Chemical mapping of a 177-nucleotide RNA with DMS. DMS adducts were read by reverse transcription with MarathonRT. Conditions: 150 mM KOAc, 10 mM MgCl2 and 150 mM bicine (pH 8.5), 24 C. Source: RMDB library 15KREP, as collected in RNAgym.
RNA sequence: GGGAACGACUCGAGUAGAGUCGAAAAUGUUUCCCAGCCAGGGAUUUUCCUCCUCUAGUUUCUUGAGUUUCUUCUUGGUCUUCCGGAGGUCCCUCUCGAGCUCUUCCGCUUUCUUUCUUCCAUUGACCCAAUAUUAAGGGUUCGCCCUUAAUAUUGGAAAAGAAACAACAACAACAAC
Reactivity to DMS in 0.01 (KOAc 150mM, MgCl2 10mM, bicine 150mM(pH8.5), 24C), signal-to-noise 1, nucleotides 027 to 126: u010g010u010u010u010c020c010c010a160g020c120c100a080g000g010g000a100u000u010u010u010c010c030u000c070c010u000c050u000a120g020u000u000u000c010u000u010g010a140g010u000u000u000c040u010u010c030u000u010g000g020u000c030u000u000c040c040g010g010a130g020g010u000c040c010c000u000c020u000c030g010a130g010c110u010c020u000u000c020c000g010c030u000u000u000c010u010u010u000c040u010u000c060c040a110u000u000g010a180c200